This 177-nucleotide RNA was probed chemically with DMS and 2A3.
RNA sequence: GGGAACGACUCGAGUAGAGUCGAAAAGACGGAAAAGAUCGAACCUAAGAAGAUCAGGUAGUGUGAGCCGAAUCCUAGGGCUCCUAGAGACGCAUCGUCAGAUGCGAAAUAAACACUAACGUCGAAAAUAGGGUCAGCUAUUCGUAGCUGACCCUAUAAAAGAAACAACAACAACAAC
Reactivity to DMS in 0.01 (KOAc 150mM, MgCl2 10mM, bicine 150mM(pH8.5), 24C), signal-to-noise 1, nucleotides 027 to 126: g000a040c000g000g000a180a070a140a030g000a000u010c050g000a140a100c010c120u020a260a130g000a120a180g000a000u000c000a170g010g000u020a030g090u000g020u000g020a020g030c000c000g000a040a110u000c000c000u000a160g000g000g040c000u000c000c180u010a130g000a080g000a240c030g000c000a000u000c000g000u000c300a020g000a020u000g000c000g020a000a060a130u000a050a180a000c000a020c000u000a000a150c040g010u000c030g000a090a050a050
Reactivity to 2A3 in 0.01 (KOAc 150mM, MgCl2 10mM, bicine 150mM(pH8.5), 24C), signal-to-noise 1, nucleotides 027 to 126: g010a000c000g080g020a000a080a000a000g030a000u110c010g000a190a140c170c110u100a100a170g060a100a000g030a070u010c050a070g000g060u080a050g000u070g000u000g020a000g060c000c000g000a190a010u000c060c060u060a010g000g000g010c000u000c000c000u080a030g000a030g000a000c000g000c000a070u000c000g260u300c100a050g000a000u000g000c000g000a000a010a010u140a000a090a000c000a000c000u000a140a110c000g000u010c000g000a010a010a010

High DMS reactivity at an A or C suggests that its Watson-Crick edge is free.